Chemical mapping of a 207-nucleotide RNA with 2A3. The reactions ran in a buffer of 150 mM KOAc, 10 mM MgCl2 and 150 mM bicine (pH 8.5), at 24 C.

RNA sequence: GGGAACGACUCGAGUAGAGUCGAAAAAAUUGGGUUAAAACGGUGGGGGACGAUCGCGUAACAUCCGUCCUAACGGCGACAGACUGCACGGCCCUGCCUCUUAGGUGUGUUCAAUGAACAGUCGUUCUGGCCCCUAAGGCGUUCGCGCCUUAGGGAAGACACUUACGAUCUUCGGAUCGUAAGUGUCAAAAGAAACAACAACAACAAC
Reactivity to 2A3 in 0.01 (KOAc 150mM, MgCl2 10mM, bicine 150mM(pH8.5), 24C), signal-to-noise 2, nucleotides 027 to 156: a000a000u090u070g020g040g000u140u100a060a020a020a040c090g020g000u030g060g030g000g000g000a010c020g030a020u190c130g000c010g060u040a000a070c000a120u040c040c000g070u070c110c010u070a120a030c020g060g040c060g030a060c080a040g060a070c060u100g020c050a000c050g030g000c020c000c000u010g020c010c010u070c010u020u030a090g000g020u010g030u000g000u280u010c070a080a050u150g010a030a000c000a070g010u000c020g030u000u070c000u060g070g070c050c000c000c000u000a010a000g000g040c030g030u070u070c200g000c020g000c080c020u020u000a000g000g000g000a000a000